Structure probing data (DMS and 2A3) for a 177-nucleotide construct. Source: RMDB library OK2TRN, as collected in RNAgym. DMS adducts were read by reverse transcription with MarathonRT.
RNA sequence: GGGAACGACUCGAGUAGAGUCGAAAAACGCUGCCGAAACGAUCCUUACGGUCGGUGAUGCUGUGAAGUUCAUCGAUAAGGCUUCUGCCUGAUCUUUGCCGCAGGGGCUGGGGUUUAUCCAAAUCCACCUCGAUUUAAAUUUCGAUUUAAAUCGAGGAAAAGAAACAACAACAACAAC
Reactivity to DMS in 0.01 (KOAc 150mM, MgCl2 10mM, bicine 150mM(pH8.5), 24C), signal-to-noise 6, nucleotides 027 to 126: a080c070g000c030u000g010c020c030g020a070a090a090c070g000a050u000c020c050u010u000a140c170g010g010u000c030g020g020u000g010a060u010g040c020u000g010u010g010a120a040g000u000u000c020a030u000c050g000a050u010a100a060g010g000c010u000u010c190u010g010c010c030u000g000a050u000c040u000u000u000g020c060c110g010c050a040g000g000g010g000c080u000g010g010g010g000u000u000u000a090u010c070c090a040a080a080u010c060c080a170
Reactivity to 2A3 in 0.01 (KOAc 150mM, MgCl2 10mM, bicine 150mM(pH8.5), 24C), signal-to-noise 4, nucleotides 027 to 126: a000c030g010c070u040g000c010c020g030a090a080a040c030g010a050u030c020c030u110u160a040c090g030g000u020c010g000g030u050g020a070u150g000c020u030g020u030g100a040a030g030u030u060c020a040u050c060g080a070u050a180a050g000g000c000u080u010c070u120g030c000c010u070g040a100u050c000u090u110u090g040c030c020g000c020a020g040g020g020g000c020u050g020g000g010g000u030u080u020a100u060c030c030a060a030a020u020c020c010a040
The reactions ran in a buffer of 150 mM KOAc, 10 mM MgCl2 and 150 mM bicine (pH 8.5), at 24 C.